[RMDB]
RNA sequence: GGGAACGACUCGAGUAGAGUCGAAAAGAAAGAAAGAAAGAAAUCUGACAGAAUGACGGAUUCGAUCGUUGUGGUCGGCGGGCCACCACGUCAUUCCUUCGCACUUUCUCCGGGCAGACCGCCAUAAAAAAGCGGAUCUACUUCGGUAGAUCCGCAAGGAUAGCUGAAGGUUCGCCUUCAGCUAUCCAAAAGAAACAACAACAACAAC
Reactivity to 2A3 in 0.01 (KOAc 150mM, MgCl2 10mM, bicine 150mM(pH8.5), 24C), signal-to-noise 1, nucleotides 027 to 156: g040a020a060a020g050a040a050a020g060a060a120a000g050a030a120a010u140c060u120g050a070c050a130g130a130a040u050g010a040c070g000g050a020u140u160c040g050a080u080c030g010u060u080g020u000g010g000u000c020g000g070c010g020g020g020c000c000a010c020c010a020c000g020u030c020a000u020u020c010c000u070u060c030g050c020a020c020u040u000u020c030u020c010c020g000g000g090c020a030g000a100c000c040g030c030c020a050u200a000a120a020a020a010a020g000c000g030g000a000u000c000u000a000c010u020u030c140g100g010u000a000g010a000u000c000c000g000c000a000a000

Structure probing data (2A3) for a 207-nucleotide construct. For 2A3 the reverse transcriptase was SuperScript II with manganese. The 2A3 profile rests on 754 reads.